[RMDB]
This 177-nucleotide RNA was probed chemically with DMS. Values cover nucleotides 27 to 126. For DMS, 1,293 sequencing reads were counted. The RNA was probed in 150 mM KOAc, 10 mM MgCl2 and 150 mM bicine (pH 8.5) at 24 C.
RNA sequence: GGGAACGACUCGAGUAGAGUCGAAAAGAGGGGAUUUCUGACCGUCCAGGUAUAGACGCCACUCUCUGCCUGAGUUGCAGUGAUGUACUCCCCGGUGCGAAAAUCCAUGGUUUGCACAGGUAAUUGGUAAACCUGCCAAGUUCGCUUGGCAGGUUUAAAAAGAAACAACAACAACAAC
Reactivity to DMS in 0.01 (KOAc 150mM, MgCl2 10mM, bicine 150mM(pH8.5), 24C), signal-to-noise 1, nucleotides 027 to 126: g010a050g000g000g010g000a070u010u000u010c020u000g010a060c080c000g000u010c190c140a060g000g020u000a070u010a030g000a030c300g010c020c060a060c040u000c000u010c000u020g010c010c000u000g000a060g000u000u020g050c030a040g020u010g000a180u010g010u000a020c080u000c040c100c000c000g020g010u000g020c010g000a020a010a050a090u020c120c130a060u010g000g000u000u010u000g030c010a030c050a080g060g010u000a060a120u000u020g000g000